[RMDB]
RNA sequence: GGGAACGACUCGAGUAGAGUCGAAAAGAUAUGGACCUGGCUACCCACCAAAUGCCAGCGAUGAAAGAAGCUAUAUCGGAAACGAUAUAGCUUCUGGAGCUGUGCAUUUGAGGCCAGGUCCUAAGUCGAUAUGCUAACCGUUCGCGGUUAGCAUAUCAAAAGAAACAACAACAACAAC
Reactivity to 2A3 in 0.01 (KOAc 150mM, MgCl2 10mM, bicine 150mM(pH8.5), 24C), signal-to-noise 1, nucleotides 027 to 126: g110a040u300a250u300g010g000a000c010c020u000g000g000c050u180a300c040c030c000a050c020c020a070a000a000u010g000c010c020a000g050c030g130a200u090g030a040a000a010g010a000a000g010c020u000a000u010a000u040c000g020g090a110a090a040c020g000a000u050a000u010a020g000c030u000u000c000u000g050g000a000g000c010u000g110u300g160c000a000u020u000u020g040a020g000g000c000c020a010g000g000u000c000c000u010a000a000g100u120c040
Reactivity to DMS in 0.01 (KOAc 150mM, MgCl2 10mM, bicine 150mM(pH8.5), 24C), signal-to-noise 1, nucleotides 027 to 126: g020a220u000a150u020g010g010a030c000c010u000g010g020c010u000a100c050c030c050a300c030c000a000a020a010u000g000c010c020a000g000c020g000a120u020g000a140a150a010g000a030a000g030c000u010a000u000a010u020c010g010g030a180a100a230c000g000a010u000a000u000a010g010c000u000u000c000u010g000g000a010g020c000u000g020u080g010c040a020u000u000u000g000a100g000g010c010c010a000g000g010u000c000c000u000a020a070g010u000c190
Annotation: Chemical mapping of a 177-nucleotide RNA with 2A3 and DMS. For DMS, 1,109 sequencing reads were counted. For 2A3, 1,631 sequencing reads were counted. Conditions: 150 mM KOAc, 10 mM MgCl2 and 150 mM bicine (pH 8.5), 24 C. Source: RMDB library TTRINS, as collected in RNAgym.